[RMDB]
RNA sequence: GGGAACGACUCGAGUAGAGUCGAAAAGAUAUGGACGCAGGAACUACAGCAUAUGUCGGAAACGACAUGGGCUGCUAGUGCGUCCUAAGUCAAAAGUUUCUGCCGAACUUCGGUUCGGCAGAAACAAGUAGUGUUAUAGGUUCGCCUAUAACACUACAAAAGAAACAACAACAACAAC
Reactivity to 2A3 in 0.01 (KOAc 150mM, MgCl2 10mM, bicine 150mM(pH8.5), 24C), signal-to-noise 4, nucleotides 027 to 126: g010a000u070a030u150g000g000a000c010g000c020a020g190g220a210a100c020u030a020c030a010g000c010a010u000a000u000g000u000c000g030g040a070a050a060c010g000a000c000a000u000g010g030g010c010u030g040c080u010a000g020u010g000c000g000u000c000c000u010a090a010g050u040c040a040a020a000a180g000u000u000u010c010u010g010c030c000g020a010a010c010u080u160c300g110g000u020u010c000g000g030c000a010g000a000a010a000c000a000a010
Reactivity to DMS in 0.01 (KOAc 150mM, MgCl2 10mM, bicine 150mM(pH8.5), 24C), signal-to-noise 5, nucleotides 027 to 126: g010a050u000a300u000g000g000a000c010g020c020a120g020g030a170a240c040u000a030c010a000g010c010a030u000a010u000g000u000c000g000g000a130a080a210c010g010a000c000a000u000g010g010g010c000u000g000c150u010a050g010u000g010c000g000u000c000c000u000a010a060g010u000c030a080a080a120a120g000u000u000u000c000u000g000c000c010g000a020a010c000u000u010c150g030g000u010u000c000g000g000c000a000g000a000a000a000c000a030a090